An RNA of 170 nucleotides, treated with DMS and 2A3 and read out base by base. The 2A3 profile rests on 48,585 reads. For DMS, 21,860 sequencing reads were counted. The reactions ran in a buffer of 150 mM KOAc, 10 mM MgCl2 and 150 mM bicine (pH 8.5), at 24 C. DMS adducts were read by reverse transcription with MarathonRT.
RNA sequence: GGGAACGACUCGAGUAGAGUCGAAAAGUUAAAAAUCUUAACAACCUUCAUCGCGGGCAAGUGUUAGGGCACAUUGCUGCGACUGUUAGAUUGCAAGCUGGUUCUAACACCGAGUUUGCCUCUAAUUACCGGGAAUGGUUCGCCAUUCCCAAAAGAAACAACAACAACAAC
Reactivity to DMS in 0.01 (KOAc 150mM, MgCl2 10mM, bicine 150mM(pH8.5), 24C), signal-to-noise 5, nucleotides 027 to 129: g020u010u020a030a050a120a170a080u040c120u070u040a010a000c050a060a110c000c000u000u060c140a100u050c090g020c110g050g010g090c000a040a060g030u030g020u020u040a110g000g000g000c010a010c030a080u000u000g030c000u030g010c020g000a050c000u100g000u060u040a060g020a140u000u000g000c010a000a000g050c050u010g010g010u000u000c010u060a060a050c010a050c030c110g010a070g000u010u040u030g000c030c120u030c010u030a060a060u050u050a070c200c060
Reactivity to 2A3 in 0.01 (KOAc 150mM, MgCl2 10mM, bicine 150mM(pH8.5), 24C), signal-to-noise 9, nucleotides 027 to 129: g000u010u020a010a040a000a030a080u140c080u010u020a020a010c020a020a040c010c000u170u190c080a170u070c050g020c060g050g030g000c010a020a020g000u010g020u070u090a070g010g090g000c020a030c040a240u030u080g000c000u000g020c010g010a000c000u010g040u080u030a060g040a300u020u130g000c010a020a030g000c010u010g000g020u040u040c050u110a050a030c030a010c050c000g030a020g010u010u060u040g010c000c010u010c000u010a070a100u080u110a090c040c080